[RMDB]
RNA sequence: GGGAACGACUCGAGUAGAGUCGAAAAAUCACCGGUGGGGAACCCCAUACGGCAACGGCCUAGAAGUAAAUGCUAACCAAUCCGUGGUAUCUACGCGACGGAGCAUCCACGGAUAACUCUAACAAGGCUAAGCGUCUCGGUUUCGACCGAGACGCAAACUAAUAGGAGACUUCGGUCUCCUAUUAGUAAAAGAAACAACAACAACAAC
Reactivity to 2A3 in 0.01 (KOAc 150mM, MgCl2 10mM, bicine 150mM(pH8.5), 24C), signal-to-noise 2, nucleotides 027 to 156: a000u040c010a010c000c010g000g000u010g070g000g070g170a150a220c050c010c020c040a060u090a150c010g020g000c040a080a050c040g040g000c030c020u090a090g030a200a000g040u060a040a140a080u120g100c080u090a130a100c070c060a020a010u000c000c000g000u000g030g000u060a070u080c100u130a070c090g030c050g230a080c170g140g000a010g020c030a010u010c000c000a000c030g000g000a000u020a010a000c050u040c030u090a070a030c040a100a000g000g070c000u090a180a030g000c000g000u000c000u040c000g000g140u000u020u160c230g100a040c000c000g010a000g040a000c000g010c000a000a000
The record gives the reactivity of an RNA of 207 nucleotides to 2A3. 2A3 adducts were read by reverse transcription with SuperScript II with manganese. The data come from the RNA Mapping Database (RMDB), library M2RFPK.